[RMDB]
RNA sequence: GGGAACGACUCGAGUAGAGUCGAAAAAAAGACAACAUCUCCGAAGGAAAAUGCUGUCACUCCAAAUCAGGCAAGGCCAGUCAAGUGCAAGGGACAGCAGAAAAAUAUUUUCAGUUAUACAGACUUAGAAACAUGUCCACCUACCUUUCCUGGAAAACCCCGAUUUAAUAUUCGUAUUAAAUCGGGGAAAAGAAACAACAACAACAAC
Reactivity to 2A3 in 0.01 (KOAc 150mM, MgCl2 10mM, bicine 150mM(pH8.5), 24C), signal-to-noise 2, nucleotides 027 to 156: a020a000a020g030a010c010a050a010c010a090u000c010u040c060c060g110a070a160g030g010a050a100a000a000u040g000c000u000g010u000c020a000c020u020c010c020a050a030a140u110c040a010g090g000c020a120a000g060g050c010c060a060g060u190c090a070a070g040u060g140c060a030a070g000g000g040a000c020a010g020c000a000g040a000a060a010a000a000u090a080u020u040u020u040c040a020g000u000u020a070u020a230c030a040g050a000c000u050u060a000g050a010a020a000c020a010u100g000u000c010c010a040c030c000u080a050c000c010u000u000u000c000c030u040g060g110a020a250a020a020
This 207-nucleotide RNA was probed chemically with 2A3. Reactivities are given for positions 27 through 156. For 2A3, 780 sequencing reads were counted. For 2A3 the reverse transcriptase was SuperScript II with manganese. It was measured as part of the RMDB library OK3TST. The RNA was probed in 150 mM KOAc, 10 mM MgCl2 and 150 mM bicine (pH 8.5) at 24 C.